Structure probing data (2A3 and DMS) for a 207-nucleotide construct. For 2A3 the reverse transcriptase was SuperScript II with manganese. It was measured as part of the RMDB library VIROID. For DMS the reverse transcriptase was MarathonRT.

RNA sequence: GGGAACGACUCGAGUAGAGUCGAAAAAGAGGAGACUGCUGGACUCGCCGCCCAAGUUCGAGCAUGGGCCAUCUCCGAGCGAAGGGAACGCGCUGGAAGGAUCAUCUCCCGAGAGGGGAUGAACGGUAAAGAGCAUUGGAUCGUCGAAGGUAAGUCCCAGUCUAUAGUAGUUCGCUACUAUAGACUGAAAAGAAACAACAACAACAAC
Reactivity to 2A3 in 0.01 (KOAc 150mM, MgCl2 10mM, bicine 150mM(pH8.5), 24C), signal-to-noise 6, nucleotides 027 to 156: a010g070a030g040g020a020g010a070c050u050g030c040u040g030g020a050c030u020c070g050c040c020g010c000c010c000a040a040g060u080u130c080g050a040g040c060a070u100g020g030g000c020c010a080u050c030u010c040c050g020a020g000c020g040a110a040g020g020g030a040a060c030g000c000g000c060u030g030g030a070a030g040g020a030u030c000a010u010c060u100c010c000c020g110a120g020a070g090g010g000g000a010u010g010a040a030c050g010g000u100a100a100a010g030a010g010c060a080u060u120g030g010a030u070c040g040u020c030g080a030a010g050g010u060a030a060g030u020c000c020
Reactivity to DMS in 0.01 (KOAc 150mM, MgCl2 10mM, bicine 150mM(pH8.5), 24C), signal-to-noise 2, nucleotides 027 to 156: a130g000a110g000g020a120g030a050c100u010g000c080u000g030g010a110c020u000c070g000c070c120g010c040c000c010a110a210g020u000u010c060g010a120g030c070a150u000g000g000g040c020c030a080u000c020u000c010c030g020a100g010c030g010a110a050g030g010g000a080a090c040g010c020g000c010u000g010g000a130a210g030g010a210u000c000a030u000c020u000c000c000c020g020a180g010a300g020g030g020g030a030u000g000a030a050c060g050g020u010a090a120a100g010a090g010c030a170u000u020g060g000a100u000c040g000u000c060g010a150a070g010g010u020a040a140g010u010c020c030